[RMDB]
RNA sequence: GGGAACGACUCGAGUAGAGUCGAAAACUUGAUAAUGGUAUCAUUAGGGAUGUAAAUCCUGAUGAUAAGUGCUUUGCUAAUAAGCACCGGUCCUUCACACAAUGGUAUCAUGAGCAUGUUGGUGGUGAAACCAUGCUCUUCGGAGCAUGGAAAAGAAACAACAACAACAAC
Reactivity to 2A3 in 0.01 (KOAc 150mM, MgCl2 10mM, bicine 150mM(pH8.5), 24C), signal-to-noise 4, nucleotides 027 to 129: c040u040u100g060a050u120a180a030u060g040g070u020a000u000c010a000u000u040a080g020g000g030a000u030g100u270a070a200a060u020c000c010u010g020a010u000g010a000u000a040a100g010u000g010c010u010u060u060g020c060u060a200a140u070a280a020g000c000a000c030c000g070g030u010c020c000u040u050c100a060c020a020c050a090a040u010g000g030u000a000u030c000a010u080g070a010g100c100a050u040g020u010u040g060g050u020g000g050u080g020a040a020a030
Reactivity to DMS in 0.01 (KOAc 150mM, MgCl2 10mM, bicine 150mM(pH8.5), 24C), signal-to-noise 3, nucleotides 027 to 129: c030u020u020g030a000u050a130a040u040g000g040u030a030u020c000a020u010u020a160g030g040g000a030u000g020u090a080a120a070u010c020c010u000g010a000u050g030a040u040a140a130g060u000g000c050u000u000u000g030c240u070a100a060u060a040a010g020c030a020c040c090g020g020u030c050c130u020u010c070a080c200a050c170a030a010u030g000g000u020a000u000c050a000u020g010a030g010c110a060u050g020u000u000g000g000u000g000g000u020g000a080a040a130